[RMDB]
RNA sequence: GGGAACGACUCGAGUAGAGUCGAAAAAGCCUUCGACCGAUCCCAUAUCAAAGCUGAGAUUCUCCACAGGAUUUUCCAGAUGGUCCAGCAGAAUCUGUUGGGCAGUGGCCUGCUCGUCGUAGGGUCGGCCUAGGAGGCCAUUCGUGGCCUCCUAGGCAAAAGAAACAACAACAACAAC
Reactivity to 2A3 in 0.01 (KOAc 150mM, MgCl2 10mM, bicine 150mM(pH8.5), 24C), signal-to-noise 2, nucleotides 027 to 126: a000g050c010c020u020u030c060g060a060c030c020g010a050u030c030c000c020a030u050a030u090c200a190a130a080g000c040u060g000a020g020a160u110u030c020u010c050c040a090c060a070g030g020a050u080u050u010u000c020c010a050g070a180u150g120g000u000c000c000a010g010c000a000g140a130a130u150c050u010g020u010u000g010g000g030c020a070g020u030g030g000c000c010u060g000c010u020c010g060u040c020g040u060a060g000g000g090u030c000g070
Reactivity to DMS in 0.01 (KOAc 150mM, MgCl2 10mM, bicine 150mM(pH8.5), 24C), signal-to-noise 1, nucleotides 027 to 126: a210g010c000c000u000u000c000g000a000c000c010g000a030u000c050c040c010a120u010a130u000c150a120a050a060g020c050u050g040a090g000a050u000u000c040u000c030c110a140c130a140g000g000a140u040u000u000u000c040c000a070g000a200u050g000g000u000c010c000a040g000c020a030g000a120a020u090c070u030g030u000u000g000g000g000c000a070g000u000g000g000c060c010u000g010c100u050c030g000u030c140g040u010a180g060g000g040u040c000g000